RNA sequence: GGGAACGACUCGAGUAGAGUCGAAAAGAUAUGGAUACAGCUUUUGACGAGCUCAUAUCGGAAACGAUAUGUGCUCGAUAAGCUGUAAUCCUAAGUCAAAAUCGAAACAGCUUCGGCUGUUUCGAAAGUAAUAGCUACGCUUCGGCGUAGCUAUUACAAAAGAAACAACAACAACAAC
Reactivity to 2A3 in 0.01 (KOAc 150mM, MgCl2 10mM, bicine 150mM(pH8.5), 24C), signal-to-noise 2, nucleotides 027 to 126: g010a000u040a010u070g020g010a000u020a000c010a000g010c040u040u140u170u210g300a200c200g000a020g000c010u000c020a010u010a000u000c020g020g000a020a010a000c030g000a000u000a000u010g020u030g020c000u000c010g000a000u020a000a010g010c020u010g000u000a000a000u000c010c000u010a050a000g030u040c010a020a010a010a300u050c020g000a010a000a010c000a000g040c000u080u150c290g250g000c020u000g000u000u000u030c020g000a000a000a000
Reactivity to DMS in 0.01 (KOAc 150mM, MgCl2 10mM, bicine 150mM(pH8.5), 24C), signal-to-noise 2, nucleotides 027 to 126: g000a050u000a220u030g000g010a040u000a000c000a010g010c000u000u000u000u000g020a190c150g010a020g000c010u010c000a000u000a000u000c010g010g000a090a060a140c000g000a000u000a000u000g000u000g000c000u010c000g000a030u000a010a020g010c000u000g000u000a000a020u000c000c000u000a010a100g000u010c020a050a080a130a110u010c000g000a020a010a010c000a010g000c010u000u010c220g030g000c000u000g000u000u000u000c000g000a010a030a120